Structure probing data (2A3) for a 207-nucleotide construct. Values are in units of 0.01, from 0 to 300, in steps of 10. For 2A3, 460 sequencing reads were counted. It was measured as part of the RMDB library OK3TST.
[RMDB]
RNA sequence: GGGAACGACUCGAGUAGAGUCGAAAAUAUUAUGAGGAAUGUGAUGGAUGUUACUGGAAGGCUUGGAGCAGGUGCCAGGACUGUUCUAAGUGCUGUAUGUGUCUGACGUCUUUGAAUCCUCUUGGCUGUCCUAGGAGGUAGGUUCAGUUACUGUCAACAUCGAUGGUAGGUUCGCCUACCAUCGAUGAAAAGAAACAACAACAACAAC
Reactivity to 2A3 in 0.01 (KOAc 150mM, MgCl2 10mM, bicine 150mM(pH8.5), 24C), signal-to-noise 1, nucleotides 027 to 156: u170a140u230u170a240u140g010a030g030g110a040a080u190g060u060g000a030u120g040g010a040u050g010u170u070a110c060u020g060g070a060a010g020g000c010u030u040g010g000a000g000c010a000g020g050u000g000c020c000a010g030g030a000c000u030g000u060u030c030u000a040a000g000u060g280c110u040g060u200a110u100g130u010g030u020c050u020g040a010c000g010u010c010u120u050u080g000a080a090u030c010c010u060c010u000u030g000g020c090u030g020u040c010c010u030a040g000g110a100g000g070u110a020g000g060u010u030c010a000g050u010u110a010c050u150g060u020c030a000a010